Description: This 177-nucleotide RNA was probed chemically with DMS. High DMS reactivity at an A or C suggests that its Watson-Crick edge is free. The DMS profile rests on 977 reads. The data come from the RNA Mapping Database (RMDB), library VIROID. The reactions ran in a buffer of 150 mM KOAc, 10 mM MgCl2 and 150 mM bicine (pH 8.5), at 24 C.

[RMDB]
RNA sequence: GGGAACGACUCGAGUAGAGUCGAAAAAAAAGUGACCGAGGGGGGUGCUAGGAACAUAGGGAGCCACUGGAGCCAUGGGAUGCUCCUCCCGAUUCCGUCCAUCCCUUCCCCCAGGGGGUCGCCCAGGCGAACGUACCUAGUUCGCUAGGUACGUUCGAAAAGAAACAACAACAACAAC
Reactivity to DMS in 0.01 (KOAc 150mM, MgCl2 10mM, bicine 150mM(pH8.5), 24C), signal-to-noise 2, nucleotides 027 to 126: a000a010a080a030g020u000g000a050c050c030g010a210g010g000g000g000g010g030u000g030c240u010a150g000g000a050a000c100a050u000a250g010g010g020a120g020c210c170a020c250u000g010g000a000g040c000c050a150u000g010g000g000a230u010g000c010u000c000c000u010c000c010c010g000a140u010u020c080c070g010u000c190c000a040u000c000c000c000u000u010c000c000c010c000c030a130g040g000g010g000g010u010c000g000c030c000c020a140g010g000